Source information:
The record gives the reactivity of an RNA of 177 nucleotides to 2A3 and DMS.
RNA sequence: GGGAACGACUCGAGUAGAGUCGAAAACGGUCACUGCGCGCGAUCGUGAGGUGGUCAAUAAGUACAGCAAGGAUGGACAGAUCACCGCGAUUCGUGCCGCUCGCCGCUACCGAGGCGACCGAUUUGGACACGCAGAUACUUUCGAGUAUCUGCGUGUAAAAGAAACAACAACAACAAC
Reactivity to 2A3 in 0.01 (KOAc 150mM, MgCl2 10mM, bicine 150mM(pH8.5), 24C), signal-to-noise 3, nucleotides 027 to 126: c010g010g020u030c050a010c150u060g000c000g010c000g000c020g040a000u000c000g000u040g070a150g020g020u010g000g010u000c010a010a060u240a190a010g050u080a040c040a040g070c110a300a000g290g070a190u060g020g020a000c030a040g000a000u000c010a000c000c000g010c010g000a010u080u070c010g000u000g000c060c000g000c000u010c000g030c000c000g000c020u050a100c030c030g010a090g020g010c020g010a070c000c010g020a050u050u060u180g080g040
Reactivity to DMS in 0.01 (KOAc 150mM, MgCl2 10mM, bicine 150mM(pH8.5), 24C), signal-to-noise 3, nucleotides 027 to 126: c030g010g020u000c080a100c160u020g020c050g020c020g020c020g010a040u000c000g010u010g010a160g030g010u000g000g000u000c010a060a050u000a090a140g010u000a020c020a040g020c160a150a160g000g000a060u000g000g000a080c190a070g000a010u000c000a020c010c010g000c000g010a020u010u000c040g010u000g010c150c030g020c020u000c160g020c030c010g010c100u020a110c130c050g000a090g000g010c030g000a050c000c010g010a190u000u000u000g010g000
For DMS, 2,933 sequencing reads were counted. The data come from the RNA Mapping Database (RMDB), library OK2TST.